[RMDB]
RNA sequence: GGGAACGACUCGAGUAGAGUCGAAAAGAUAUGGACACCGGUUGGCGAAGAACGUGGUGUCGGAAACGACACGUAACAUCGGGAGCCAACGGUGUCCUAAGUCAAAAGUAAACCUUCGGGUUUACAACGUAUUGGGAAUCUUCGGAUUCCCAAUACGAAAAGAAACAACAACAACAAC
Reactivity to 2A3 in 0.01 (KOAc 150mM, MgCl2 10mM, bicine 150mM(pH8.5), 24C), signal-to-noise 2, nucleotides 027 to 126: g000a010u010a010u050g000g020a000c040a010c070c110g150g200u070u010g000g010c060g180a300a070g070a300a130c050g040u040g050g010u020g000u000c010g000g000a010a010a000c000g010a000c000a000c020g100u280a120a050c020a160u300c060g100g020g040a080g000c000c000a000a000c000g000g000u010g000u000c000c000u000a010a000g000u010c000a000a010a010a140g020u010a000a000a000c000c000u000u070c250g040g010g000u000u000u000a000c000a020a050
Reactivity to DMS in 0.01 (KOAc 150mM, MgCl2 10mM, bicine 150mM(pH8.5), 24C), signal-to-noise 2, nucleotides 027 to 126: g000a030u000a280u000g000g000a000c000a000c000c000g020g010u020u000g010g030c030g000a300a150g000a060a090c060g040u010g010g010u000g010u010c000g030g000a020a030a100c010g000a020c000a000c010g010u020a100a170c100a090u000c030g000g020g030a190g020c000c000a000a000c010g010g000u010g030u000c000c000u000a000a030g000u010c000a100a130a110a080g000u000a000a000a000c000c010u000u040c160g010g020g010u020u000u000a000c000a070a220